[RMDB]
RNA sequence: GGGAACGACUCGAGUAGAGUCGAAAAUCAUGAUUUACGUUAACGUCUUCGUGGGAUAAGAUAGUUGUCAGUUCAUCCUUUGAUAAUUUUCCAAAUUCUGGAUCGGAUGUCACCGCAGUAAUAUUGUUGAUUAUUUCUGACAUCGACGCAUUAUAUACCUUAAUCAGGAUUUCGAUCCUGAUUAAGGAAAAGAAACAACAACAACAAC
Reactivity to DMS in 0.01 (KOAc 150mM, MgCl2 10mM, bicine 150mM(pH8.5), 24C), signal-to-noise 3, nucleotides 027 to 156: u010c040a100u010g020a090u000u000u000a040c050g010u010u000a080a080c080g020u000c040u000u010c050g030u030g040g050g020a120u000a050a100g010a060u000a120g010u000u000g020u010c020a080g010u000u000c140a090u010c050c060u000u000u000g010a100u020a040a070u000u000u000u000c010c030a050a080a170u010u000c060u010g010g030a080u010c090g000g020a040u000g010u000c030a070c070c060g000c090a080g030u010a050a060u000a100u010u000g010u000u000g010a110u000u000a040u000u000u000c010u000g010a050c050a090u000c040g000a110c070g050c080a080u000u000a090u010a140u000a160
Reactivity to 2A3 in 0.01 (KOAc 150mM, MgCl2 10mM, bicine 150mM(pH8.5), 24C), signal-to-noise 5, nucleotides 027 to 156: u040c020a020u060g070a050u050u030u110a030c030g050u040u090a100a020c020g020u010c020u060u060c050g080u150g050g070g020a050u060a050a040g010a040u080a150g030u030u050g060u080c120a070g000u030u050c020a030u010c020c050u080u070u050g040a040u040a150a120u070u110u040u000c030c000a060a110a140u160u060c080u120g060g030a070u060c060g040g010a010u010g030u030c020a010c090c090g020c060a020g020u050a030a080u070a050u140u080g060u030u030g020a090u010u080a010u040u080u020c030u020g010a020c010a020u030c050g080a050c040g000c040a010u160u080a040u110a040u080a170